[RMDB]
Structure probing data (2A3 and DMS) for a 177-nucleotide construct. Reactivities are given for positions 27 through 126. 2A3 adducts were read by reverse transcription with SuperScript II with manganese. As a SHAPE reagent, 2A3 marks flexible, mostly unpaired nucleotides at the ribose 2'-OH. Conditions: 150 mM KOAc, 10 mM MgCl2 and 150 mM bicine (pH 8.5), 24 C.

RNA sequence: GGGAACGACUCGAGUAGAGUCGAAAAAUGAAAAUGAGUUUAUAUGUAGUCUAGGUAACUAGGCUACAUAAAUGAGACCUAUUAUACCGGCUGAAACGGCAGUCCUCCCAGGAGCAAGUAAGGAGGGCCAAACCUUUUUUUUCGAAAAAAGGUUUGGAAAAGAAACAACAACAACAAC
Reactivity to 2A3 in 0.01 (KOAc 150mM, MgCl2 10mM, bicine 150mM(pH8.5), 24C), signal-to-noise 4, nucleotides 027 to 126: a000u130g040a010a050a010a020u120g040a050g050u020u070u110a190u020a020u040g000u000a000g010u000c000u000a000g020g040u090a160a120c000u000a000g000g000c000u000a000c000a000u000a010a010a000u080g010a000g030a030c000c010u020a030u150u030a070u090a050c030c010g050g030c080u080g020a140a060a020c040g040g010c010a000g030u040c000c010u020c000c030c010a040g020g040a030g020c100a110a010g020u110a050a010g010g010a000g000g010g000
Reactivity to DMS in 0.01 (KOAc 150mM, MgCl2 10mM, bicine 150mM(pH8.5), 24C), signal-to-noise 4, nucleotides 027 to 126: a050u030g000a050a060a080a070u030g010a160g020u010u010u000a060u020a030u010g000u000a010g010u010c000u000a000g010g000u050a120a160c000u010a000g000g000c000u000a010c000a010u000a000a050a090u040g020a110g000a070c030c010u010a080u010u020a110u030a110c060c040g030g000c060u000g020a070a070a030c050g000g000c070a050g000u010c010c020u000c020c040c070a070g020g010a100g030c070a040a070g010u010a080a110g020g000a070g000g000g010